Source: RMDB library OK2TRN, as collected in RNAgym. The record gives the reactivity of an RNA of 177 nucleotides to DMS and 2A3. DMS adducts were read by reverse transcription with MarathonRT. For 2A3 the reverse transcriptase was SuperScript II with manganese. Values cover nucleotides 27 to 126.

RNA sequence: GGGAACGACUCGAGUAGAGUCGAAAAGAAAGUACAGGCGGGUACGUUGGCAGCAGAGUGCGGCCGCGUUACUUUUGUAACGAGCACUCCGGCCGCUGCCUCCGUCACCGCCUCGACGGAGGGAAAAGCUAAUAAAUCAGUUCGCUGAUUUAUUAGCAAAAGAAACAACAACAACAAC
Reactivity to DMS in 0.01 (KOAc 150mM, MgCl2 10mM, bicine 150mM(pH8.5), 24C), signal-to-noise 9, nucleotides 027 to 126: g000a120a090a090g020u000a100c080a030g000g010c010g000g010g000u000a010c010g010u000u000g000g010c020a030g020c050a140g010a070g010u000g010c010g010g030c170c190g000c010g000u000u000a000c000u000u010u000u010g010u000a010a010c010g010a150g010c060a050c050u010c080c150g000g010c140c100g000c010u000g000c000c000u000c030c000g010u000c060a050c010c010g000c000c000u000c060g020a020c020g000g000a050g000g000g010a110a080a100a140
Reactivity to 2A3 in 0.01 (KOAc 150mM, MgCl2 10mM, bicine 150mM(pH8.5), 24C), signal-to-noise 7, nucleotides 027 to 126: g010a010a050a010g030u060a060c020a020g000g000c010g000g010g010u020a010c010g030u030u050g040g020c020a020g000c020a030g050a020g090u070g030c030g040g070c080c050g100c030g010u060u000a000c000u070u270u290u300g010u000a000a000c000g010a020g040c010a020c040u030c020c030g160g030c050c030g000c010u010g020c000c000u000c000c000g000u000c010a000c000c000g000c000c000u000c000g000a000c010g020g020a040g020g010g010a020a120a030a040